This 177-nucleotide RNA was probed chemically with 2A3 and DMS. For DMS the reverse transcriptase was MarathonRT. The RNA was probed in 150 mM KOAc, 10 mM MgCl2 and 150 mM bicine (pH 8.5) at 24 C. Source: RMDB library OK2TST, as collected in RNAgym. For 2A3, 2,453 sequencing reads were counted. 2A3 adducts were read by reverse transcription with SuperScript II with manganese.
RNA sequence: GGGAACGACUCGAGUAGAGUCGAAAAAUGGUCGAUACGCAUAAACUAGCAGACGACGUUCUUCAGCUAUUGGAUAACCGUAUCGAAGAUAAUUAUAGGGUUUGUGUUAUCCUAGUCGGUUCUCCAAUAUCGCAUUAGGUUUCGACCUAAUGCGAUAAAAAGAAACAACAACAACAAC
Reactivity to 2A3 in 0.01 (KOAc 150mM, MgCl2 10mM, bicine 150mM(pH8.5), 24C), signal-to-noise 3, nucleotides 027 to 126: a000u070g040g010u010c000g010a030u060a240c040g000c040a020u070a150a180a090c100u100a110g000c020a020g020a060c040g020a010c000g050u040u020c000u070u070c040a070g030c040u070a030u040u040g000g020a010u000a010a000c000c010g040u040a020u200c040g000a020a010g010a040u080a060a020u260u280a070u120a170g230g120g020u050u220u090g090u070g000u020u030a010u000c000c000u000a010g010u030c010g000g010u000u000c010u000c000c020a010a030
Reactivity to DMS in 0.01 (KOAc 150mM, MgCl2 10mM, bicine 150mM(pH8.5), 24C), signal-to-noise 4, nucleotides 027 to 126: a040u010g010g020u010c010g030a050u010a150c110g030c070a140u010a110a150a130c210u000a060g020c020a060g010a220c030g010a060c070g030u000u000c020u000u000c060a190g000c130u000a020u010u000g010g000a020u010a020a040c060c010g020u010a040u000c010g000a100a210g000a030u000a020a060u000u000a090u000a090g020g010g020u000u000u000g010u010g010u000u000a010u000c000c020u000a230g000u000c010g010g010u000u010c060u000c000c030a030a080